[RMDB]
The data come from the RNA Mapping Database (RMDB), library TTRDES. Structure probing data (2A3 and DMS) for a 177-nucleotide construct. The RNA was probed in 150 mM KOAc, 10 mM MgCl2 and 150 mM bicine (pH 8.5) at 24 C. The 2A3 profile rests on 2,756 reads. For 2A3 the reverse transcriptase was SuperScript II with manganese.
RNA sequence: GGGAACGACUCGAGUAGAGUCGAAAAGAUAUGGAAACCGUGACUUCAACAGCUUCACUCGGAAACGAGUGAAGACAUGAAGCCACGUGUUUCCUAAGUCAAACCCCUCCCGUUCGCGGGAGGGGAACAUACCCUCCCCGUUCGCGGGGAGGGUAUGAAAAGAAACAACAACAACAAC
Reactivity to 2A3 in 0.01 (KOAc 150mM, MgCl2 10mM, bicine 150mM(pH8.5), 24C), signal-to-noise 2, nucleotides 027 to 126: g020a000u060a000u260g000g000a000a000a000c000c010g000u010g010a040c000u020u010c050a120a090c060a300g060c000u010u010c010a020c020u010c000g050g020a110a080a040c010g020a000g000u010g010a000a000g000a000c000a120u060g000a000a020g000c000c010a000c020g040u070g010u020u000u000c000c000u010a030a010g010u020c030a090a040a300c020c020c000c000u000c000c000c000g050u090u080c300g000c040g110g030g000a000g000g000g010g000a010a000
Reactivity to DMS in 0.01 (KOAc 150mM, MgCl2 10mM, bicine 150mM(pH8.5), 24C), signal-to-noise 2, nucleotides 027 to 126: g000a110u010a300u000g000g000a020a000a030c010c020g010u010g010a030c000u000u000c030a040a070c300a300g000c010u010u000c000a010c010u000c010g000g000a130a080a170c030g000a010g020u000g000a000a000g000a020c150a150u000g010a010a000g020c000c000a010c010g030u010g000u000u010u000c000c000u000a020a160g010u010c010a070a090a300c040c000c000c020u000c000c000c000g050u000u000c220g060c010g020g050g000a020g010g000g000g020a000a010